RNA sequence: GGGAACGACUCGAGUAGAGUCGAAAAUUUUCGCCUUUAAAAGAAUAAAUUCCAUUAAAAAAAGGUAAAAAGAAAAAUCUAUUCACUGAACUUGCCGAUAGAAUUUGCAAAUGUGUCAAGUGCAUCACUUCCGAUACGUUUUCGAACGUAUCGGAAGAAAAGAAACAACAACAACAAC
Reactivity to 2A3 in 0.01 (KOAc 150mM, MgCl2 10mM, bicine 150mM(pH8.5), 24C), signal-to-noise 1, nucleotides 027 to 126: u030u040u010u010c000g000c000c000u000u000u000a080a060a020a000g040a000a060u160a050a130a070u210u000c090c000a100u220u290a100a190a040a000a000a000a000g040g030u130a020a040a000a140a000g030a030a030a080a040a000u050c030u150a080u060u100c030a000c010u010g030a050a040c000u000u000g000c000c010g030a030u010a000g190a100a040u040u000u000g060c010a000a050a190u090g050u040g120u030c010a110a050g010u090g050c050a030u020c050a000